[RMDB]
RNA sequence: GGGAACGACUCGAGUAGAGUCGAAAAGGAGAAUUCGUUCUCCAAGCAUCCUAAGUCCGAAGCGCACCUUGGAUUUAUCUUGUCAGAGUCGGAAACGACUCUUGGAUUUAGAUUGUCAGGGAUCUUCGGAUAUGGACACCAAUCUCUUCGGAGAUAAUGAGGAGUACUCUUUCGAGAGUACUCCUCAAAAAGAAACAACAACAACAAC
Reactivity to 2A3 in 0.01 (KOAc 150mM, MgCl2 10mM, bicine 150mM(pH8.5), 24C), signal-to-noise 2, nucleotides 027 to 156: g020g030a020g000a050a000u130u140c200g100u120u010c070u000c000c000a010a010g050c030a060u010c000c000u020a080a030g020u000c010c000g000a020a000g000c110g000c180a150c050c030u010u010g020g030a030u190u270u170a000u070c000u000u040g000u010c000a000g010a000g030u010c000g020g000a050a050a050c000g000a000c000u000c000u010u030g010g000a000u170u170u090a000g000a000u000u020g020u020c000a000g000g020g000a050u020c020u000u000c000g000g020a000u020a000u000g000g000a010c000a030c050c010a030a070u080c000u000c000u130u120c180g150g010a000g040a010u180a060a120